The record gives the reactivity of an RNA of 177 nucleotides to 2A3 and DMS. DMS adducts were read by reverse transcription with MarathonRT. The RNA was probed in 150 mM KOAc, 10 mM MgCl2 and 150 mM bicine (pH 8.5) at 24 C. It was measured as part of the RMDB library OK2TST.

RNA sequence: GGGAACGACUCGAGUAGAGUCGAAAAGAGAAGAACCAACAUUCAAUCUUUUGGGAGGUUCAACUUGAUUUAUUACCUUGUUAGAUUUAGGAUCCUUGGUGGAUCCAAACAGAAGAUACUGCACCUCGAUACAAGACGGUUUCGACCGUCUUGUAUCAAAAGAAACAACAACAACAAC
Reactivity to 2A3 in 0.01 (KOAc 150mM, MgCl2 10mM, bicine 150mM(pH8.5), 24C), signal-to-noise 2, nucleotides 027 to 126: g040a010g000a080a000g010a020a000c060c040a010a020c030a050u160u280c050a050a300u050c100u030u300u090u030g030g040g000a070g080g000u000u000c000a000a000c010u000u030g020a020u070u070u130a150u060u120a120c010c040u040u060g150u060u130a070g030a180u130u090u140a070g000g010a010u030c020c050u050u200g300g000u120g160g050a000u000c000c000a010a010a020c020a020g030a070a000g050a080u130a130c040u080g050c060a060c080c060u090c090
Reactivity to DMS in 0.01 (KOAc 150mM, MgCl2 10mM, bicine 150mM(pH8.5), 24C), signal-to-noise 3, nucleotides 027 to 126: g000a030g000a060a300g020a030a020c020c020a090a180c100a200u010u010c090a110a140u000c120u000u000u000u000g020g010g020a270g020g010u000u000c010a030a260c030u020u000g010a240u000u000u000a060u020u000a050c020c000u010u000g010u000u000a080g000a200u010u000u000a110g020g000a020u000c000c010u010u020g010g040u020g020g000a000u010c000c010a010a040a050c050a100g010a010a060g000a040u000a040c150u000g000c190a080c050c020u010c180